An RNA of 207 nucleotides, treated with 2A3 and DMS and read out base by base. 2A3 adducts were read by reverse transcription with SuperScript II with manganese. The data come from the RNA Mapping Database (RMDB), library OK3TST. DMS adducts were read by reverse transcription with MarathonRT. For 2A3, 1,450 sequencing reads were counted. For DMS, 1,900 sequencing reads were counted.

RNA sequence: GGGAACGACUCGAGUAGAGUCGAAAACUUCUAUGCUGCCAACGGAACAUAGACUAACAUGUUUGUACAGGAUCUGGAUGGCACACCUUCUCUGCGUCGGAUCCAAUCUUGAUAGCUACAACGUUCGACGUCUAUCUGGUUGACUUGCGGAGACCAAUCUAGGUAUAGGCUUCGGCCUAUACCUAGAAAAAGAAACAACAACAACAAC
Reactivity to 2A3 in 0.01 (KOAc 150mM, MgCl2 10mM, bicine 150mM(pH8.5), 24C), signal-to-noise 3, nucleotides 027 to 156: c030u070u010c020u060a110u150g050c030u050g000c030c010a000a010c030g080g020a090a020c020a080u090a030g040a000c030u080a100a040c050a100u130g090u100u040u060g070u150a060c060a100g060g000a040u020c020u080g130g000a050u060g180g020c020a010c000a030c070c040u250u150c110u010c030u120g020c000g040u030c040g020g030a040u000c030c010a020a020u070c040u060u140g070a070u050a150g090c080u090a030c020a080a010c040g080u090u120c120g110a050c040g010u000c010u010a010u020c030u090g090g000u030u020g000a050c020u050u080g010c010g030g000a000g000a000c060c010a010a070
Reactivity to DMS in 0.01 (KOAc 150mM, MgCl2 10mM, bicine 150mM(pH8.5), 24C), signal-to-noise 1, nucleotides 027 to 156: c090u000u000c010u010a060u000g020c050u000g060c010c000a000a080c080g030g040a110a080c060a050u010a000g040a160c050u000a090a160c010a080u010g040u010u000u000g020u050a040c030a150g030g010a100u000c040u010g050g020a040u010g010g040c040a000c020a050c140c060u000u010c060u000c010u000g000c000g040u010c010g050g030a060u000c010c010a000a120u010c050u000u010g050a190u000a210g000c110u010a110c030a030a030c040g000u000u000c050g010a220c190g020u010c050u020a050u000c040u000g000g040u000u010g020a060c060u010u000g000c000g040g000a090g000a110c030c040a030a260